Source: RMDB library RSTRND, as collected in RNAgym. Chemical mapping of a 207-nucleotide RNA with 2A3 and DMS. The reactions ran in a buffer of 150 mM KOAc, 10 mM MgCl2 and 150 mM bicine (pH 8.5), at 24 C. The DMS profile rests on 3,057 reads. The 2A3 profile rests on 2,886 reads.

RNA sequence: GGGAACGACUCGAGUAGAGUCGAAAAGAACUACGCUCUCGCUGCUUAAGUGAGAUGACGACCGUGCAGCCCGGCCUUUGGCGUCGCGGAAGUCACUAAAAAAGAAGGCUAGCCCAGGCGAUUCUCCAUAGCCGACGGCGAAACUUUAUGGAGCUACCUUUAGAAUAGGGUUCGCCCUAUUCUAAAGAAAAGAAACAACAACAACAAC
Reactivity to 2A3 in 0.01 (KOAc 150mM, MgCl2 10mM, bicine 150mM(pH8.5), 24C), signal-to-noise 4, nucleotides 027 to 156: g050a050a050c070u140a050c130g050c050u010c000u000c000g010c020u070g020c070u280u260a080a010g000u010g020a000g010a000u060g020a020c000g000a010c000c000g000u000g010c030a020g000c000c000c000g040g000c000c010u000u000u000g000g000c020g010u010c010g000c000g000g020a020a030g010u070c100a090c280u270a070a100a060a030a000a000g020a000a000g000g000c010u000a000g000c010c000c000a000g000g000c010g010a030u230u020c010u000c000c000a000u000a000g000c000c000g010a020c020g000g000c000g000a000a010a000c020u250u300u230a020u010g000g000a000g000c000u110a110c000
Reactivity to DMS in 0.01 (KOAc 150mM, MgCl2 10mM, bicine 150mM(pH8.5), 24C), signal-to-noise 2, nucleotides 027 to 156: g000a130a170c020u000a050c080g010c030u000c020u000c020g040c020u000g040c120u000u010a080a090g040u000g010a070g030a080u010g000a090c010g000a190c010c030g080u000g000c100a130g010c000c000c030g000g020c020c040u020u000u000g050g010c000g080u030c040g020c010g000g000a040a200g020u000c010a070c090u030a010a040a090a040a040a090g010a050a060g010g010c000u000a190g000c010c000c010a290g000g010c010g010a080u010u000c010u000c040c020a100u000a300g010c020c000g030a080c100g020g000c000g010a130a060a090c140u010u000u000a060u030g000g010a070g030c080u010a110c080